[RMDB]
Structure probing data (DMS and 2A3) for a 207-nucleotide construct.
The RNA was probed in 150 mM KOAc, 10 mM MgCl2 and 150 mM bicine (pH 8.5) at 24 C.
For DMS, 3,389 sequencing reads were counted.
Reactivities are given for positions 27 through 156.
RNA sequence: GGGAACGACUCGAGUAGAGUCGAAAACACAAUUCUCUAAGCGAUGAGAAGCGUGUGGAAAAUUAGGGAAGGGCUACGGCUAUAAUCCUACGAAAGCUUAUCUACAAGCGGAGGUAUUCUCAGAACGAAAACCAUUUGGCGUUCGCGCCAAAUGGAACAUAUGCAACACGUUCGCGUGUUGCAUAUGAAAAGAAACAACAACAACAAC
Reactivity to DMS in 0.01 (KOAc 150mM, MgCl2 10mM, bicine 150mM(pH8.5), 24C), signal-to-noise 2, nucleotides 027 to 156: c010a060c050a070a230u000u000c030u000c010u000a110a170g000c080g040a300u010g010a040g010a040a030g010c240g040u000g010u000g000g000a040a060a060a100u010u000a090g000g000g010a110a090g020g020g020c040u000a090c140g040g000c020u000a100u010a040a120u000c020c010u010a220c080g010a090a100a070g000c030u010u000a080u020c060u010a080c050a060a090g020c020g000g010a050g020g020u000a080u000u000c000u070c040a080g010a060a120c080g010a070a060a070a160c000c000a070u010u000u000g000g000c010g000u010u010c300g030c000g000c010c000a000a000a020u000g000g000a020a050
Reactivity to 2A3 in 0.01 (KOAc 150mM, MgCl2 10mM, bicine 150mM(pH8.5), 24C), signal-to-noise 4, nucleotides 027 to 156: c040a010c000a030a050u030u010c000u000c020u040a180a140g120c080g130a110u080g000a060g010a000a020g020c030g040u060g000u080g000g020a060a120a080a100u140u100a060g000g000g030a050a030g080g010g000c010u050a020c140g030g000c010u010a040u030a220a050u070c010c010u030a040c050g080a110a030a000g000c000u030u040a050u150c050u140a110c070a140a000g000c020g030g010a010g020g030u040a120u130u040c030u000c020a030g050a140a040c090g060a070a090a030a040c000c000a000u000u010u000g000g000c010g030u080u060c200g040c000g000c070c000a000a000a000u000g000g000a000a000